[RMDB]
RNA sequence: GGGAACGACUCGAGUAGAGUCGAAAAGCAUCAAUCGAUCCCAGUACGAAGGGGGGAUGCAGUGAACGGUCGUUAGUACGGUGAGCAAAAAGACGUUUAUAGAUUGUAGUGACAUCUUUUCGGUUACUUUUGUCAGUCAACAGUUCAAGUGCAGUUAUCCACUAUUACGGUUCGCCGUAAUAGUGGAAAAAGAAACAACAACAACAAC
Reactivity to 2A3 in 0.01 (KOAc 150mM, MgCl2 10mM, bicine 150mM(pH8.5), 24C), signal-to-noise 3, nucleotides 027 to 156: g060c020a100u120c050a080a110u130c130g070a020u060c020c010c020a010g060u050a040c100g030a130a100g010g020g000g000g010g010a000u010g000c010a020g050u030g060a020a010c030g020g020u060c020g060u060u050a040g020u110a020c000g000g060u070g010a040g010c030a000a090a050a000a020g030a030c040g030u070u040u070a130u040a050g090a060u010u170g010u020a040g040u030g030a030c000a020u070c040u060u070u080u090c010g050g020u090u000a060c040u010u030u060u110g030u050c040a040g030u040c020a040a030c010a040g020u040u040c050a120a000g040u000g050c020a010g020u030u050a100
Reactivity to DMS in 0.01 (KOAc 150mM, MgCl2 10mM, bicine 150mM(pH8.5), 24C), signal-to-noise 3, nucleotides 027 to 156: g000c090a130u000c070a110a160u000c060g010a130u000c000c000c020a290g010u010a100c080g010a100a130g010g000g030g010g040g010a110u010g030c020a050g010u000g020a040a050c030g010g040u010c010g020u000u000a120g010u000a090c030g020g040u010g000a080g050c040a040a050a040a050a080g000a050c060g020u000u000u000a110u010a140g010a200u000u010g030u010a140g010u010g000a020c030a030u000c010u010u000u000u000c020g020g000u010u000a040c020u000u010u010u000g020u020c030a140g000u000c020a050a070c020a100g000u000u000c040a030a090g010u000g010c020a070g020u000u000a230
This 207-nucleotide RNA was probed chemically with 2A3 and DMS. 2A3 is a SHAPE reagent: it acylates the 2'-hydroxyl of flexible nucleotides of all four kinds. DMS adducts were read by reverse transcription with MarathonRT.